[RMDB]
RNA sequence: GGGAACGACUCGAGUAGAGUCGAAAAUAAGUAUUCGUACUUAAAUCUGAUAUGGAGUCCGGGUGCUCUUUGAUCGUACGUAACAUCCACCUCGGAAACGAGGUGGUGGUACGGGAGAGCACAGGACUCCUAAGUCCUCGUUCGGAUUCGUCCGAAACUCUCCGUACUUAUUCGUAAGUACGGAGAGAAAAGAAACAACAACAACAAC
Reactivity to 2A3 in 0.01 (KOAc 150mM, MgCl2 10mM, bicine 150mM(pH8.5), 24C), signal-to-noise 4, nucleotides 027 to 156: u080a010a000g020u020a030u060u220c200g040u050a010c010u040u050a070a200a290u180c100u110g000a020u010a020u100g000g000a000g000u000c030c020g300g300g060u010g000c010u030c010u300u160u030g030a030u060c000g010u000a000c000g010u000a000a020c000a130u040c010c000a010c000c000u010c000g020g000a020a010a010c000g000a000g000g000u000g000g000u000g000g000u000a000c000g000g000g000a020g020a000g000c000a000c000a000g000g000a010c000u000c000c000u000a000a000g010u000c000c020u070c080g100u030u030c000g010g010a040u090u070c160g070u020c050c020g020a100a080a080
Reactivity to DMS in 0.01 (KOAc 150mM, MgCl2 10mM, bicine 150mM(pH8.5), 24C), signal-to-noise 1, nucleotides 027 to 156: u000a000a060g000u000a010u010u000c300g020u020a030c000u000u000a030a150a150u010c030u020g020a160u000a100u010g020g000a030g010u000c000c000g000g100g040u000g070c010u000c000u000u000u010g010a060u000c010g020u000a000c020g000u000a080a010c110a120u000c000c000a000c020c000u010c020g000g000a120a080a160c010g010a020g010g030u000g000g020u000g010g010u000a000c000g000g020g020a040g000a010g020c000a050c020a110g030g000a010c010u020c000c010u020a000a090g000u000c020c040u000c090g000u020u020c030g030g010a110u000u010c280g020u010c010c000g000a030a050a180